[RMDB]
RNA sequence: GGGAACGACUCGAGUAGAGUCGAAAAACUAGAAGGUACCAGGAAGAUGACAGAGAAAGCCUUAGGGAAACAGGCCCCAUAAGGUUGUUUAUGAGUCGGGUGCAGUGACUCAUGCCUGUAAUCCCAGGAUCUGUAACUGGUUCGCCAGUUACAGAUCAAAAGAAACAACAACAACAAC
Reactivity to DMS in 0.01 (KOAc 150mM, MgCl2 10mM, bicine 150mM(pH8.5), 24C), signal-to-noise 2, nucleotides 027 to 126: a100c060u000a080g030a120a080g010g020u010a080c090c050a060g000g010a080a120g020a060u000g010a100c030a050g000a080g000a060a070a090g000c020c010u020u000a120g010g000g010a060a160a070c040a060g000g000c020c000c010c010a120u010a050a020g000g000u010u010g020u010u010u000a060u000g000a020g020u010c010g000g020g010u010g010c080a090g000u010g000a040c050u000c020a040u010g030c050c010u000g000u000a080a090u000c010c020c000a170g000
Reactivity to 2A3 in 0.01 (KOAc 150mM, MgCl2 10mM, bicine 150mM(pH8.5), 24C), signal-to-noise 1, nucleotides 027 to 126: a000c050u050a050g060a100a040g040g060u050a060c000c050a010g070g050a070a030g050a060u080g030a020c040a040g080a000g080a150a080a030g000c000c000u060u040a060g000g080g000a000a060a110c010a080g110g010c000c000c000c010a040u010a090a020g040g000u020u020g000u000u200u040a070u070g010a020g030u030c070g000g010g110u210g050c070a050g050u030g100a010c000u010c020a010u030g010c000c000u000g010u060a000a100u000c000c010c010a040g000

An RNA of 177 nucleotides, treated with DMS and 2A3 and read out base by base. The RNA was probed in 150 mM KOAc, 10 mM MgCl2 and 150 mM bicine (pH 8.5) at 24 C. It was measured as part of the RMDB library OK2TST. The DMS profile rests on 1,509 reads.